[RMDB]
RNA sequence: GGGAACGACUCGAGUAGAGUCGAAAAUAACCUGAGGUCAGAUAUCUGAGCCCACAGCACGGCGGCCCAUUAAGCUUAUCGUCUGCUCCUGUGUAGGCAGGCCGAUAAAACCCAUGGGCCUACAAAGGUGGUGAUCGUAAUUCGUUACGAUCACCACAAAAGAAACAACAACAACAAC
Reactivity to DMS in 0.01 (KOAc 150mM, MgCl2 10mM, bicine 150mM(pH8.5), 24C), signal-to-noise 1, nucleotides 027 to 126: u000a190a090c100c060u000g000a140g000g020u000c000a020g000a150u020a120u140c000u000g000a070g000c060c000c070a170c130a070g000c160a100c040g000g000c120g010g000c000c000c000a000u060u000a110a070g000c160u000u000a000u000c000g000u000c000u000g000c000u010c190c080u000g020u060g040u040a260g000g000c000a000g000g000c070c100g000a010u000a060a000a110a120c300c030c160a040u000g000g000g030c000c000u000a050c080a010a090a090g000
Reactivity to 2A3 in 0.01 (KOAc 150mM, MgCl2 10mM, bicine 150mM(pH8.5), 24C), signal-to-noise 3, nucleotides 027 to 126: u140a020a060c040c010u050g010a070g030g040u040c010a000g060a190u070a140u300c020u040g080a090g140c010c000c000a120c000a040g090c010a020c050g170g020c020g020g000c030c000c000a040u050u080a060a000g020c030u010u010a000u020c000g010u020c010u020g050c010u110c020c070u300g060u120g070u300a030g020g020c000a010g030g010c030c030g000a000u030a000a020a010a040c000c000c000a000u020g010g000g000c000c000u000a000c010a000a080a010g100